This 177-nucleotide RNA was probed chemically with 2A3 and DMS. Source: RMDB library OK2TST, as collected in RNAgym.
[RMDB]
RNA sequence: GGGAACGACUCGAGUAGAGUCGAAAAGCGCUCUUCCCUUUCCUCGCGGGAAGAGGGGGAGGAACGGUCGCCGAACGAGCCGAACGAAUGGUGAGCUGGGACUUCUCCUGGGCGGGAGCAGCCAAGGGCUGCGACAUUAGUUCGCUAAUGUCGCAGCAAAAGAAACAACAACAACAAC
Reactivity to 2A3 in 0.01 (KOAc 150mM, MgCl2 10mM, bicine 150mM(pH8.5), 24C), signal-to-noise 9, nucleotides 027 to 126: g030c040g010c010u010c000u020u040c010c000c000u010u060u020c030c010u050c050g080c080g020g020g020a020a020g020a040g020g000g000g000g000a030g010g010a030a010c020g010g030u040c020g000c050c010g020a070a030c020g010a030g130c120c050g090a130a080c030g040a070a090u120g010g020u030g010a050g030c020u030g000g020g030a030c000u040u010c010u020c010c010u040g020g050g020c050g010g010g010a030g000c050a010g020c010c010a030a050g110g070
Reactivity to DMS in 0.01 (KOAc 150mM, MgCl2 10mM, bicine 150mM(pH8.5), 24C), signal-to-noise 9, nucleotides 027 to 126: g010c080g010c020u000c000u000u000c010c010c000u000u000u000c020c010u000c150g020c260g010g000g000a030a030g000a040g010g000g000g000g000a030g000g010a100a100c040g010g010u000c030g020c020c010g010a060a210c060g000a140g010c080c070g000a080a140c080g010a070a090u010g010g010u000g000a120g020c020u000g010g000g010a170c050u000u000c020u000c010c010u010g010g010g010c070g000g000g000a060g010c050a100g010c020c050a120a110g000g010
The DMS profile rests on 48,859 reads.